[RMDB]
RNA sequence: GGGAACGACUCGAGUAGAGUCGAAAAGAUAUGGAUCGUGUAAGGGAGCUGAUCGGAAACGAUAACAGCGAGGAUCUUACUGCGAUCCUAAGUCAAACCAACCUCUUGCUUCGGCAAGAGGUUGGAAGUACUCAACAACGUUCGCGUUGUUGAGUACAAAAGAAACAACAACAACAAC
Reactivity to DMS in 0.01 (KOAc 150mM, MgCl2 10mM, bicine 150mM(pH8.5), 24C), signal-to-noise 2, nucleotides 027 to 126: g000a040u000a300u010g000g010a000u000c000g040u000g010u010a000a000g000g000g000a030g060c000u000g010a080u000c000g000g010a110a080a180c010g010a000u000a080a130c010a030g000c000g000a050g000g000a020u000c000u000u000a000c010u000g060c000g020a010u000c000c000u000a010a100g010u000c030a100a180a170c010c010a010a000c010c000u010c000u000u000g000c000u000u020c210g000g000c000a000a000g000a000g000g000u000u000g000g000a000a040
Reactivity to 2A3 in 0.01 (KOAc 150mM, MgCl2 10mM, bicine 150mM(pH8.5), 24C), signal-to-noise 3, nucleotides 027 to 126: g030a000u050a010u160g020g000a000u010c010g000u010g010u040a000a020g010g020g000a000g020c010u020g020a010u000c000g010g060a120a070a040c010g010a000u110a300a180c000a010g030c020g020a260g030g040a020u000c000u010u020a020c030u130g090c000g000a000u000c010c000u000a050a010g020u020c020a070a020a090c000c000a010a010c000c000u020c010u000u010g000c010u040u050c170g180g000c010a000a010g000a000g050g010u000u000g000g000a010a000

Source: RMDB library TTRDEL, as collected in RNAgym. Structure probing data (DMS and 2A3) for a 177-nucleotide construct. Values cover nucleotides 27 to 126. The 2A3 profile rests on 6,258 reads. For DMS the reverse transcriptase was MarathonRT. The RNA was probed in 150 mM KOAc, 10 mM MgCl2 and 150 mM bicine (pH 8.5) at 24 C.